[RMDB]
RNA sequence: GGGAACGACUCGAGUAGAGUCGAAAAAUGGAUUCUGAGACACGAAUCCAGGCCCUACGGGGCGCAGCAGGCGCGAAAACUCUACAAUGCAGGCAACUGCGAUAGGGGGACAUCGAGUGGCAUCCACCGGGCUCAAAAAAUUCGUUUUUUGAGCCCGAAAAGAAACAACAACAACAAC
Reactivity to 2A3 in 0.01 (KOAc 150mM, MgCl2 10mM, bicine 150mM(pH8.5), 24C), signal-to-noise 2, nucleotides 027 to 126: a010u020g010g000a010u000u000c020u020g060a020g000a010c030a020c170g010a020a000u000c010c010a010g060g000c000c010c000u010a050c030g010g000g000g000c020g010c000a020g040c000a010g100g000c030g000c020g030a020a010a080a120c000u030c000u010a020c060a080a150u150g000c020a000g030g000c040a140a090c110u000g020c000g030a030u140a050g000g010g000g010g010a000c010a050u030c020g000a010g020u040g020g010c010a070u020c010c000a050c030
Reactivity to DMS in 0.01 (KOAc 150mM, MgCl2 10mM, bicine 150mM(pH8.5), 24C), signal-to-noise 2, nucleotides 027 to 126: a050u000g000g010a010u000u020c000u040g000a300g000a200c180a210c150g000a020a000u000c010c000a050g000g050c020c030c010u000a120c260g080g000g000g000c010g000c120a050g050c020a090g000g000c000g000c030g000a130a040a090a170c030u000c040u000a080c090a060a130u030g010c040a000g000g000c230a090a100c010u000g000c000g010a050u000a020g020g000g000g000g000a050c190a070u000c060g000a110g020u000g010g000c060a070u000c030c050a070c240